[RMDB]
RNA sequence: GGGAACGACUCGAGUAGAGUCGAAAAGAUAUGGACGUGCUCAGCUUUUGACGGAGCCGGUGUCGGAAACGACACCUGGCUCCGAUAAGCUGGCACGUCCUAAGUCAAACUCCUCUUCGGAGGAGAAGUAAGGAAGAUACUUCGGUAUCUUCCUUACAAAAGAAACAACAACAACAAC
Reactivity to DMS in 0.01 (KOAc 150mM, MgCl2 10mM, bicine 150mM(pH8.5), 24C), signal-to-noise 4, nucleotides 027 to 126: g000a050u000a300u000g000g000a010c010g020u000g010c010u010c010a020g030c000u000u000u000u000g010a260c160g020g010a020g020c000c010g020g020u000g010u010c000g010g000a090a100a210c010g010a000c000a000c000c000u010g070g010c000u000c000c000g010a010u010a010a030g020c000u000g010g000c010a000c000g000u000c000c000u000a010a050g010u000c020a150a160a250c010u000c000c010u000c000u000u010c180g010g000a020g000g000a000g010a030a080
Reactivity to 2A3 in 0.01 (KOAc 150mM, MgCl2 10mM, bicine 150mM(pH8.5), 24C), signal-to-noise 2, nucleotides 027 to 126: g010a000u060a040u120g030g010a000c020g010u040g000c060u110c300a020g000c030u240u190u280u300g220a260c300g010g000a000g040c010c000g020g030u010g020u000c020g000g000a060a060a050c010g010a020c010a010c000c020u020g010g000c030u000c010c000g000a010u000a000a000g000c010u000g020g040c000a000c010g000u000c000c000u000a010a010g000u000c000a000a010a060c000u010c000c010u000c010u050u060c250g160g010a000g020g000a010g010a030a030
Chemical mapping of a 177-nucleotide RNA with DMS and 2A3. The RNA was probed in 150 mM KOAc, 10 mM MgCl2 and 150 mM bicine (pH 8.5) at 24 C. Reactivities are given for positions 27 through 126. Source: RMDB library TTRDES, as collected in RNAgym. DMS adducts were read by reverse transcription with MarathonRT.